[RMDB]
RNA sequence: GGGAACGACUCGAGUAGAGUCGAAAAGGCAGCGAAUUCGUUCGCUGCCAAUUCAGGACGUGGAGCCGGCUUCACGGCGCACGUCGAUGACGCCCGGGCCGGAGAAUCCAGAUUUCGAUCUGGAUAAACUGUGUGCUUCAUUCGUGAAGCACACAGUAAAAGAAACAACAACAACAAC
Reactivity to DMS in 0.01 (KOAc 150mM, MgCl2 10mM, bicine 150mM(pH8.5), 24C), signal-to-noise 1, nucleotides 027 to 126: g020g040c000a010g020c000g020a030a040u000u030c210g030u000u010c020g000c010u000g000c000c010a100a030u000u000c030a090g020g000a060c040g020u000g010g030a230g000c010c000g000g010c220u000u000c180a130c030g020g000c010g000c010a050c030g010u000c010g040a030u000g010a110c290g010c010c000c020g020g000g000c030c030g000g000a110g000a110a110u000c010c010a000g000a020u000u000u010c160g030a040u000c010u010g010g020a000u000a020a080
Reactivity to 2A3 in 0.01 (KOAc 150mM, MgCl2 10mM, bicine 150mM(pH8.5), 24C), signal-to-noise 1, nucleotides 027 to 126: g000g060c010a000g000c010g050a020a010u090u110c170g040u090u000c000g020c000u010g000c000c000a060a000u010u020c030a020g110g010a020c030g010u010g010g050a080g010c010c010g060g060c090u300u260c130a090c030g010g000c010g000c010a000c010g010u020c020g010a040u030g010a020c090g040c010c050c040g010g030g000c030c040g080g020a060g070a010a040u030c010c010a030g000a020u030u090u130c190g090a000u040c000u010g010g000a010u040a040a110

Annotation: An RNA of 177 nucleotides, treated with DMS and 2A3 and read out base by base. It was measured as part of the RMDB library M2PK50. The DMS profile rests on 894 reads. Values are in units of 0.01, from 0 to 300, in steps of 10. The RNA was probed in 150 mM KOAc, 10 mM MgCl2 and 150 mM bicine (pH 8.5) at 24 C.